[RMDB]
Structure probing data (DMS and 2A3) for a 177-nucleotide construct. Conditions: 150 mM KOAc, 10 mM MgCl2 and 150 mM bicine (pH 8.5), 24 C. For DMS the reverse transcriptase was MarathonRT. The DMS profile rests on 7,394 reads. The 2A3 profile rests on 3,935 reads.
RNA sequence: GGGAACGACUCGAGUAGAGUCGAAAAACUGCGACGAGCGAUGUGGAUGAUCUCGACUCGGUGGUGGCCGUCGUCGAUGGCGUAGACGACGCGGUAAUCACCGCGGCGGGCUGAGUGGAGGCCUUCACCAUCAUAUACCCUUCGGGGUAUAUGAUGGAAAAGAAACAACAACAACAAC
Reactivity to DMS in 0.01 (KOAc 150mM, MgCl2 10mM, bicine 150mM(pH8.5), 24C), signal-to-noise 4, nucleotides 027 to 126: a100c060u010g010c050g000a070c080g010a090g000c050g010a060u000g010u010g010g000a080u010g000a070u010c020u000c030g000a070c030u000c020g010g030u000g010g020u000g000g020c010c010g010u010c040g000u000c030g010a110u000g010g000c090g010u010a110g000a160c010g000a030c000g010c000g000g000u000a100a040u000c060a040c010c010g020c110g000g000c020g000g010g000c100u010g010a080g030u000g010g000a080g010g000c050c040u000u000c100a140
Reactivity to 2A3 in 0.01 (KOAc 150mM, MgCl2 10mM, bicine 150mM(pH8.5), 24C), signal-to-noise 3, nucleotides 027 to 126: a000c050u090g030c040g050a090c010g010a080g050c070g030a080u090g040u060g070g030a060u060g030a060u030c030u000c040g070a060c010u000c010g000g010u000g010g020u010g080g000c030c000g010u100c030g020u010c030g050a090u100g120g040c130g050u110a040g010a140c000g000a010c000g000c010g000g010u040a080a060u070c020a000c010c000g010c000g020g010c010g040g020g000c030u050g010a040g030u080g010g030a030g020g020c000c030u030u020c050a060